[RMDB]
Overview:
An RNA of 170 nucleotides, treated with DMS and 2A3 and read out base by base. For DMS, 9,363 sequencing reads were counted. The RNA was probed in 150 mM KOAc, 10 mM MgCl2 and 150 mM bicine (pH 8.5) at 24 C. The data come from the RNA Mapping Database (RMDB), library 15KLIB.
RNA sequence: GGGAACGACUCGAGUAGAGUCGAAAAAGGAGUCCGCAGGUGGGAGGAUCAGCCACCGGAGAGGGACGCGAUGGUAAGAGUGGAGGAAAGUUCGGAGGGAAAUCCCAAGAAGGUCAUUCGAGAUUCAAUGGAACAGCGUUCGCGCUGUUCAAAAGAAACAACAACAACAAC
Reactivity to DMS in 0.01 (KOAc 150mM, MgCl2 10mM, bicine 150mM(pH8.5), 24C), signal-to-noise 2, nucleotides 027 to 129: a120g030g000a090g020u020c040c010g000c160a120g010g050u020g000g000g000a050g000g000a030u030c160a100g040c130c080a060c110c050g050g010a120g020a130g020g010g010a080c120g030c070g010a120u070g000g010u060a000a000g010a000g040u040g050g010a050g060g000a020a040a060g010u050u010c000g040g020a070g030g020g040a000a000a000u000c030c020c010a030a020g020a080a050g030g000u040c100a090u060u020c000g000a100g000a060u000u000c070a090a070u060g010
Reactivity to 2A3 in 0.01 (KOAc 150mM, MgCl2 10mM, bicine 150mM(pH8.5), 24C), signal-to-noise 2, nucleotides 027 to 129: a000g070g000a020g020u050c040c030g000c040a020g060g010u040g040g020g000a010g050g000a050u040c050a010g020c000c040a020c010c020g000g000a040g000a030g020g000g000a000c010g000c020g080a030u100g000g010u020a060a060g050a020g010u060g020g000a000g000g000a030a010a010g060u080u060c020g010g000a000g010g030g020a050a030a020u000c000c000c000a000a040g020a010a010g010g000u040c000a020u140u060c040g020a000g000a050u090u080c030a040a040u110g100